An RNA of 177 nucleotides, treated with 2A3 and DMS and read out base by base. For 2A3, 3,441 sequencing reads were counted. Conditions: 150 mM KOAc, 10 mM MgCl2 and 150 mM bicine (pH 8.5), 24 C. For 2A3 the reverse transcriptase was SuperScript II with manganese. Source: RMDB library TTRDES, as collected in RNAgym. For DMS, 2,535 sequencing reads were counted. DMS adducts were read by reverse transcription with MarathonRT.
RNA sequence: GGGAACGACUCGAGUAGAGUCGAAAAGAUAUGGACUUUCCUGCGGCUGAUGACCUAGCUCGGAAACGAGCUAGCAAGGCCCAGGGAGUCCUAAGUCAAAAUCCGUAGUUGUUCGCAACUACGGAAACACAUAUAAGGCCUUCGGGCCUUAUAUGUGAAAAGAAACAACAACAACAAC
Reactivity to 2A3 in 0.01 (KOAc 150mM, MgCl2 10mM, bicine 150mM(pH8.5), 24C), signal-to-noise 2, nucleotides 027 to 126: g030a010u080a060u180g000g000a000c010u060u200u300c140c000u050g010c190g090g000c020u050g010a300u160g020a130c010c020u000a000g030c000u000c010g000g000a040a120a080c030g020a000g020c000u020a000g000c010a080a190g000g020c020c000c010a010g010g000g000a000g000u000c000c000u010a040a010g030u000c030a010a040a020a300u000c000c000g010u000a000g000u000u030g010u070u070c300g000c130a000a000c000u000a000c000g010g000a000a010a000
Reactivity to DMS in 0.01 (KOAc 150mM, MgCl2 10mM, bicine 150mM(pH8.5), 24C), signal-to-noise 3, nucleotides 027 to 126: g020a080u010a300u010g000g010a010c010u000u000u020c000c000u000g020c270g030g020c010u000g000a120u000g000a090c300c010u000a000g000c000u000c000g020g010a130a110a230c000g000a010g000c000u020a000g000c000a090a140g020g010c000c000c000a000g000g000g000a010g000u000c000c010u000a000a070g020u010c050a130a070a200a140u000c000c000g030u000a020g010u000u000g010u000u010c190g030c000a010a000c000u000a010c000g010g000a000a030a120